Record summary
Source: RMDB library M2RFOK, as collected in RNAgym. The record gives the reactivity of an RNA of 207 nucleotides to 2A3. The RNA was probed in 150 mM KOAc, 10 mM MgCl2 and 150 mM bicine (pH 8.5) at 24 C. For 2A3, 574 sequencing reads were counted. Reactivities are given for positions 27 through 156.

[RMDB]
RNA sequence: GGGAACGACUCGAGUAGAGUCGAAAAACUGCCAUACGUGGCAGAAACACGCCUUACCAGGACUAAACAGCGUGUCCAAAAAACAGUCCUUCAUACCUGAUCUGGAGGGUAGAUCAGGAAUACUAAAAAAAUCGGGUGAAGUUCGCUUCACCCGAAAUCCACUGAAGAUGUUCGCAUCUUCAGUGGAAAAAGAAACAACAACAACAAC
Reactivity to 2A3 in 0.01 (KOAc 150mM, MgCl2 10mM, bicine 150mM(pH8.5), 24C), signal-to-noise 1, nucleotides 027 to 156: a020c000u000g070c000c000a060u030a080c260g100u040g000g000c010a000g030a010a020a000c010a010c000g000c000c040u040u080a020c030c020a000g010g010a010c010u100a200a110a020c030a020g020c000g000u000g010u050c040c030a060a060a000a000a000a000c060a000g000u000c020c010u030u030c050a070u160a200c000c000u000g010a000u000c000u010g040g090a130g170g050g020u030a020g000a000u010c000a000g000g000a000a000u020a020c060u150a010a070a000a000a000a040a260u100c020g000g040g000u000g000a010a000g000u070u080c140g050c080u000u000c000a000c020c010c000g000a000a000a000